[RMDB]
Conditions: 150 mM KOAc, 10 mM MgCl2 and 150 mM bicine (pH 8.5), 24 C. Chemical mapping of a 207-nucleotide RNA with 2A3 and DMS. It was measured as part of the RMDB library ARCHII.
RNA sequence: GGGAACGACUCGAGUAGAGUCGAAAACAGUGAGCAGGGAGAGCGAAGUCCAGUUUCACGACAACGGAGAAAAAAUGUUAGCUGGGGAACGUCCCUUUCCCGAGAGCCCGCGCCGUCCUUUUUCUUCCUCGGGCCCGUUGGCAUAGCCCCUGGCCUCCUUAAUCAUUCUGUUCGCAGAAUGAUUAAGAAAAGAAACAACAACAACAAC
Reactivity to 2A3 in 0.01 (KOAc 150mM, MgCl2 10mM, bicine 150mM(pH8.5), 24C), signal-to-noise 3, nucleotides 027 to 156: c060a010g050u050g090a050g030c020a040g000g030g000a030g000a020g040c030g040a060a010g040u020c020c020a020g010u030u100u130c110a070c040g110a030c050a120a020c090g080g020a070g080a060a070a050a000a010a040u150g020u080u030a040g020c020u040g000g000g000g060a100a040c020g030u050c030c000c000u000u030u010c020c000c000g040a060g010a020g030c020c010c000g000c020g000c000c020g040u050c000c000u070u160u060u060u050c020u090u050c000c040u040c010g020g020g000c020c000c010g050u060u080g010g010c040a050u090a070g020c010c010c010c040u010g020g050c000c000u060c000
Reactivity to DMS in 0.01 (KOAc 150mM, MgCl2 10mM, bicine 150mM(pH8.5), 24C), signal-to-noise 2, nucleotides 027 to 156: c080a090g020u000g010a060g050c060a100g010g000g020a100g020a100g030c070g000a060a110g000u010c030c030a120g010u000u000u020c040a090c040g010a070c050a050a100c060g000g010a150g050a000a050a060a080a100a140u000g010u000u000a110g000c060u000g000g030g010g010a090a070c020g000u010c040c020c010u000u000u000c030c000c000g000a150g020a130g010c010c000c030g030c000g010c030c030g000u010c020c010u000u000u000u000u000c020u030u000c020c020u000c050g020g010g030c010c010c010g000u010u010g030g020c040a120u010a150g020c010c010c000c000u000g020g010c050c010u000c020